Record summary
Chemical mapping of a 177-nucleotide RNA with 2A3 and DMS. Values cover nucleotides 27 to 126. The DMS profile rests on 32,593 reads. It was measured as part of the RMDB library OK2TST. DMS adducts were read by reverse transcription with MarathonRT. For 2A3 the reverse transcriptase was SuperScript II with manganese.
[RMDB]
RNA sequence: GGGAACGACUCGAGUAGAGUCGAAAAUUUUAGCCUUAGUAGCAACUGGUUUUUGACCGCUAAUGAGGUGGAGUUCGUUUAAGGCUGAUUCCAAGAACUUACUGUCGCGAAUGACGUCACCCACCCCCUACCUAAUAAUGUUCGCAUUAUUAGGUAGAAAAGAAACAACAACAACAAC
Reactivity to 2A3 in 0.01 (KOAc 150mM, MgCl2 10mM, bicine 150mM(pH8.5), 24C), signal-to-noise 9, nucleotides 027 to 126: u040u050u020u070a010g000c000c000u050u040a040g050u060a020g070c050a070a080c110u090g090g080u050u040u040u110u300g110a030c010c020g000c040u060a090a100u150g040a050g040g010u040g030g030a040g020u030u060c040g020u070u080u090a050a010g030g000c020u020g030a060u110u000c010c010a030a040g070a060a030c030u070u090a050c040u170g030u060c020g010c050g150a110a070u120g040a040c020g030u040c030a080c020c010c010a060c010c000c000c000
Reactivity to DMS in 0.01 (KOAc 150mM, MgCl2 10mM, bicine 150mM(pH8.5), 24C), signal-to-noise 9, nucleotides 027 to 126: u000u000u000u010a190g010c010c010u000u000a040g010u010a060g010c070a140a090c190u010g010g010u000u000u010u010u010g010a070c020c020g010c050u000a060a090u000g010a070g010g020u000g010g000a060g000u000u000c080g020u000u000u000a040a100g010g010c100u000g010a090u000u000c020c020a080a170g000a050a060c080u000u010a060c090u000g010u000c030g010c100g010a080a080u010g000a070c060g010u010c070a090c020c010c020a300c030c000c010c040